[RMDB]
Conditions: 150 mM KOAc, 10 mM MgCl2 and 150 mM bicine (pH 8.5), 24 C. The record gives the reactivity of an RNA of 207 nucleotides to 2A3. For 2A3 the reverse transcriptase was SuperScript II with manganese. Values cover nucleotides 27 to 156.
RNA sequence: GGGAACGACUCGAGUAGAGUCGAAAAAAGCGGCUAGGGCAUGUCGAGGACCCGUCACCUCGUUAAUCAAUGGGAAAAUCGUAACUGCAAACGACGAUACGUUCGCACUGGCAGCCUAAGGGCCGCCGUCCUCUGCCUAGUUCACUGACGGGCUAGUCUUCACAUUACCCUUCGGGGUAAUGUGAAGAAAAGAAACAACAACAACAAC
Reactivity to 2A3 in 0.01 (KOAc 150mM, MgCl2 10mM, bicine 150mM(pH8.5), 24C), signal-to-noise 1, nucleotides 027 to 156: a030a000g000c000g010g000c040u030a080g030g020g050c040a080u060g050u040c000g010a000g000g000a010c000c000c000g000u010c020a010c000c000u020c000g040u040u130a020a080u060c070a000a050u060g040g000g020a020a000a000a060u040c050g010u070a050a090c070u180g000c160a200a080a010c070g030a010c000g000a030u040a040c120g030u030u000c030g020c180a010c050u020g020g010c020a030g030c040c040u080a090a070g100g010g000c000c000g050c000c010g030u030c000c020u000c040u050g010c010c010u030a050g020u090u150c030a010c110u020g000a000c010g000g000g020c010u010a010g000u000